[RMDB]
RNA sequence: GGGAACGACUCGAGUAGAGUCGAAAAAGUUACUUCCGGUAACUAGGAGUUUGUAGUGACGUAAGUUUCGUUCUAAAAGGACUCAUCAGGUAGCCUAAUAGACUACGACUUACGCGGUAGGUCGUGACGUUAGACAUUGGUUCGCCAAUGUCUAACGAAAAGAAACAACAACAACAAC
Reactivity to DMS in 0.01 (KOAc 150mM, MgCl2 10mM, bicine 150mM(pH8.5), 24C), signal-to-noise 3, nucleotides 027 to 126: a060g000u000u000a020c030u000u010c190c080g010g000u010a040a000c030u000a110g000g020a110g020u020u010u000g010u000a080g010u020g000a070c030g000u000a050a040g010u000u010u010c070g000u020u000c020u000a020a040a200a080g010g010a100c030u000c030a130u010c130a100g010g010u000a050g000c020c000u030a040a250u000a050g020a070c190u000a040c040g000a010c010u010u000a000c010g010c110g000g030u000a100g000g000u000c040g010u010g000a090
Reactivity to 2A3 in 0.01 (KOAc 150mM, MgCl2 10mM, bicine 150mM(pH8.5), 24C), signal-to-noise 2, nucleotides 027 to 126: a000g040u050u010a010c010u140u030c080c030g080g020u050a030a050c010u010a090g080g040a070g080u080u140u270g090u130a110g020u020g100a070c030g010u000a030a090g010u000u140u120c060g000u080u020c010u010a080a020a000a060g040g030a210c040u020c060a200u100c010a040g120g110u140a030g010c000c010u040a090a080u040a060g040a030c090u010a050c090g000a000c010u010u000a050c100g000c040g100g010u010a030g000g030u090c020g110u090g030a030

The record gives the reactivity of an RNA of 177 nucleotides to DMS and 2A3. Source: RMDB library VIROID, as collected in RNAgym.